[RMDB]
RNA sequence: GGGAACGACUCGAGUAGAGUCGAAAACUAACAGUUACCAGUCAACUAGGAAAGCUGUGGGGAAGGUAAUUAGUUCAUUUACGUAAUGUACUGAGGUAGAUCAUGUGAGGAUCUCUUUUUCCAGAUGUCCGUUAUAGACCUUCGGGUCUAUAACGGAAAAAGAAACAACAACAACAAC
Reactivity to DMS in 0.01 (KOAc 150mM, MgCl2 10mM, bicine 150mM(pH8.5), 24C), signal-to-noise 2, nucleotides 027 to 126: c080u000a040a120c070a050g020u010u010a230c030c020a080g000u020c160a070a080c120u000a110g000g000a070a100a130g000c030u010g020u000g000g000g000g000a070a030g000g000u000a050a070u000u000a050g020u000u000c040a020u000u000u000a090c170g000u010a040a030u000g000u010a040c040u000g020a050g030g040u000a030g010a030u010c040a060u000g000u020g000a110g020g010a040u000c020u020c010u000u000u000u000u020c000c000a180g000a120u010g010
Reactivity to 2A3 in 0.01 (KOAc 150mM, MgCl2 10mM, bicine 150mM(pH8.5), 24C), signal-to-noise 1, nucleotides 027 to 126: c040u070a080a000c010a000g030u120u060a050c010c010a010g070u000c030a120a120c080u060a060g010g100a120a040a020g110c040u040g000u050g030g030g030g020a060a000g090g010u140a060a040u030u030a000g020u040u000c030a020u030u030u060a120c210g090u250a060a000u030g020u030a000c000u010g050a010g070g060u150a040g040a040u030c010a120u150g240u210g200a170g070g020a020u000c040u020c010u030u000u000u050u000c010c010a050g000a260u130g100
Chemical mapping of a 177-nucleotide RNA with DMS and 2A3. For 2A3, 802 sequencing reads were counted. The reactions ran in a buffer of 150 mM KOAc, 10 mM MgCl2 and 150 mM bicine (pH 8.5), at 24 C. Source: RMDB library OK2TRN, as collected in RNAgym. DMS (dimethyl sulfate) methylates the pairing face of unpaired adenines and cytosines. Reactivities are given for positions 27 through 126.